[RMDB]
RNA sequence: GGGAACGACUCGAGUAGAGUCGAAAAUAGAUUCCGAUAGAGAAUCGAGAGAAAACUGGCUCUCCCUUAGCCAUCCGAGUGGACGUUCGUCCUCCUUCGGAUGCCCAGGUCGGACCGCGAGGAGGUGUAGCCCUAUUGUUCGCAAUAGGGAAAAGAAACAACAACAACAAC
Reactivity to DMS in 0.01 (KOAc 150mM, MgCl2 10mM, bicine 150mM(pH8.5), 24C), signal-to-noise 9, nucleotides 027 to 129: u050a080g000a020u010u000c010c020g020a160u060a080g030a100g000a030a020u000c010g000a050g010a080g010a070a040a080a090c100u010g010g000c060u000c020u020c030c010c030u010u010a070g020c120c010a020u000c020c000g010a010g000u000g000g020a030c030g020u060u080c150g010u030c020c010u000c060c070u030u020c010g000g000a000u010g000c060c020c040a080g020g030u030c030g000g000a090c020c020g040c080g010a040g010g010a050g000g000u010g000u010a080g030
Reactivity to 2A3 in 0.01 (KOAc 150mM, MgCl2 10mM, bicine 150mM(pH8.5), 24C), signal-to-noise 9, nucleotides 027 to 129: u140a010g030a010u020u010c020c020g100a120u130a150g230a010g010a030a020u020c030g000a000g000a000g020a080a120a020a060c070u050g030g000c000u000c010u010c010c010c000u030u090a020g020c030c010a000u000c010c010g010a010g020u050g010g010a010c050g090u180u190c160g020u150c010c010u030c020c050u090u060c010g000g000a010u020g010c000c000c000a030g030g030u030c020g020g020a030c010c000g030c040g030a050g010g010a010g000g020u040g030u070a050g020

Structure probing data (DMS and 2A3) for a 170-nucleotide construct. For 2A3, 123,902 sequencing reads were counted. It was measured as part of the RMDB library 15KLIB. Reactivities are given for positions 27 through 129. DMS adducts were read by reverse transcription with MarathonRT.